[RMDB]
RNA sequence: GGGAACGACUCGAGUAGAGUCGAAAAUAGGGCAAAGUGCAUUGUCAUUACACGGCGAUUUGGAGCAACGCGAUCGCGAUCAGACCCUGGUACGUUUUGCUAACGGUAGCGCCCGUGUACUGGUCGAUGCGUAAUAUGGGUUCGCCCAUAUUACGCAAAAAGAAACAACAACAACAAC
Reactivity to 2A3 in 0.01 (KOAc 150mM, MgCl2 10mM, bicine 150mM(pH8.5), 24C), signal-to-noise 2, nucleotides 027 to 126: u060a000g000g000g050c030a000a080a050g060u090g050c010a000u020u060g000u020c000a000u000u040a010c020a020c010g010g000c030g060a080u060u040u130g110g020a040g020c010a030a050c010g030c010g050a040u080c100g050c060g070a050u050c010a010g090a140c030c020c010u040g030g030u070a070c030g030u000u000u040u100g050c020u080a220a100c050g160g060u050a050g100c030g000c070c010c030g000u010g000u000a120c020u030g010g070u080c000g020a030
Reactivity to DMS in 0.01 (KOAc 150mM, MgCl2 10mM, bicine 150mM(pH8.5), 24C), signal-to-noise 3, nucleotides 027 to 126: u000a100g020g020g030c040a040a060a060g040u010g000c030a040u000u000g010u000c020a050u000u000a040c050a020c050g000g000c030g010a100u010u000u000g030g020a120g000c040a030a030c080g010c070g010a050u000c080g010c140g010a050u000c060a090g000a170c060c050c060u000g010g050u000a070c040g010u010u000u000u000g010c060u000a070a080c090g030g000u010a090g010c040g000c110c000c040g010u000g000u000a050c090u000g010g000u000c020g000a080